[RMDB]
RNA sequence: GGGAACGACUCGAGUAGAGUCGAAAAUAAAUUAAAUUCACGAUCCAAUGUACAUCUUGUAUCUAGUUUACAAAAACGCAUAAAAGAACAAGUGGAAUGGGCUACACAUAGUCCAGCUCGAUGCCACCGUGACGACAAUAUUCGUAUUGUCGUCACGAAAAGAAACAACAACAACAAC
Reactivity to DMS in 0.01 (KOAc 150mM, MgCl2 10mM, bicine 150mM(pH8.5), 24C), signal-to-noise 2, nucleotides 027 to 126: u010a110a030a180u000u000a070a070a130u010u000c060a060c100g020a010u030c020c030a100a160u010g030u020a050c080a060u020c040u010u000g000u000a030u000c060u000a040g010u000u010u000a030c140a080a030a070a070a040c100g040c220a080u000a040a070a050a040g010a010a020c140a070a080g030u000g020g030a060a050u000g000g000g000c010u010a010c290a060c220a090u000a030g000u000c010c010a060g000c060u010c160g000a030u020g000c010c050a060c080
Reactivity to 2A3 in 0.01 (KOAc 150mM, MgCl2 10mM, bicine 150mM(pH8.5), 24C), signal-to-noise 2, nucleotides 027 to 126: u030a010a030a020u210u120a040a080a100u140u110c090a020c080g030a040u010c000c080a070a050u100g060u100a080c030a100u030c030u060u000g030u070a070u080c040u040a070g090u040u080u050a050c030a040a150a010a090a010c020g010c040a050u100a190a190a010a030g050a010a060c040a160a000g030u000g000g020a040a040u010g000g000g000c000u040a020c230a000c030a300u070a000g030u000c000c010a010g020c040u040c050g080a000u170g050c020c010a000c020

The record gives the reactivity of an RNA of 177 nucleotides to DMS and 2A3. 2A3 adducts were read by reverse transcription with SuperScript II with manganese. DMS (dimethyl sulfate) methylates the pairing face of unpaired adenines and cytosines. The RNA was probed in 150 mM KOAc, 10 mM MgCl2 and 150 mM bicine (pH 8.5) at 24 C.